This 207-nucleotide RNA was probed chemically with 2A3. As a SHAPE reagent, 2A3 marks flexible, mostly unpaired nucleotides at the ribose 2'-OH. Reactivities are given for positions 27 through 156.

RNA sequence: GGGAACGACUCGAGUAGAGUCGAAAAACGGUCGUACGCGACCGAGGCGCGGCUAGGUCGACGGACCGAACAAUGGCAUCCCGCAUUCUGCCAUCCGCCGUGCAGCUUCUUCUCAAACGGUGCGGAAAAAAGUAGGACACCUUCGGGUGUCCUACAACGGACAAUAGACGUUCGCGUCUAUUGUCCGAAAAGAAACAACAACAACAAC
Reactivity to 2A3 in 0.01 (KOAc 150mM, MgCl2 10mM, bicine 150mM(pH8.5), 24C), signal-to-noise 1, nucleotides 027 to 156: a000c020g000g000u000c010g010u040a060c230g010c020g160a000c000c000g000a080g000g000c020g000c010g000g000c000u000a000g000g000u010c030g080a140c230g300g020a020c010c020g000a000a000c010a010a010u000g000g000c020a000u070c030c020c010g000c000a000u300u140c010u010g000c000c000a000u000c010c000g000c000c000g010u020g020c020a020g030c060u180u060c020u070u030c020u000c010a060a080a020c070g030g000u020g000c000g000g000a070a000a070a000a000a040g000u010a010g000g000a000c010a010c000c020u020u090c210g080g010g000u010g000u000c000c000u000a000c000a000a000
Source: RMDB library M2RFPK, as collected in RNAgym.